[RMDB]
RNA sequence: GGGAACGACUCGAGUAGAGUCGAAAAAAUGGCACUGCAGAGCUGGUGGGCCAUGUACCUAUCCAAAAUGAGAUCCCAUCUUGCACACUGUGCUAAUUUGAGAUUCUCAUGCCUCCUACUUGGAGAGACCGCAUGCCCAGCUUCGGCUGGGCAUGAAUUACCUAAGAGUGUUCGCACUCUUAGGUAAAAAAGAAACAACAACAACAAC
Reactivity to DMS in 0.01 (KOAc 150mM, MgCl2 10mM, bicine 150mM(pH8.5), 24C), signal-to-noise 2, nucleotides 027 to 156: a060a030u000g020g030c020a100c010u010g000c040a150g020a090g020c020u000g060g000u000g000g010g020c030c010a100u000g020u000a100c050c020u030a090u000c040c070a060a050a100a060u010g000a030g000a070u000c000c000c000a040u000c080u000u000g020c020a030c020a240c130u020g020u010g020c000u000a010a040u000u000u000g000a030g010a050u000u000c010u000c010a050u000g000c040c010u010c020c010u000a120c090u000u010g020g010a090g010a160g000a160c060c050g010c000a010u000g000c010c000c000a040g000c020u000u000c300g050g070c030u020g010g000g030c010a000u000g000a030a150
Reactivity to 2A3 in 0.01 (KOAc 150mM, MgCl2 10mM, bicine 150mM(pH8.5), 24C), signal-to-noise 2, nucleotides 027 to 156: a000a000u120g010g020c100a060c200u040g040c080a010g030a050g190c080u090g060g010u050g030g030g000c010c000a020u020g010u060a070c010c010u040a050u070c060c080a000a070a060a080u040g000a020g000a040u020c000c020c000a000u000c040u030u070g000c010a010c020a050c130u160g010u000g010c050u080a060a210u010u000u000g020a050g010a030u170u030c050u000c020a000u060g030c000c000u030c000c020u120a280c110u150u170g000g000a030g010a030g070a020c070c080g020c010a000u000g000c000c000c000a000g040c040u050u080c170g060g080c000u000g000g000g020c000a000u000g000a000a010
Annotation: An RNA of 207 nucleotides, treated with DMS and 2A3 and read out base by base. The 2A3 profile rests on 838 reads. For DMS, 6,666 sequencing reads were counted. The RNA was probed in 150 mM KOAc, 10 mM MgCl2 and 150 mM bicine (pH 8.5) at 24 C.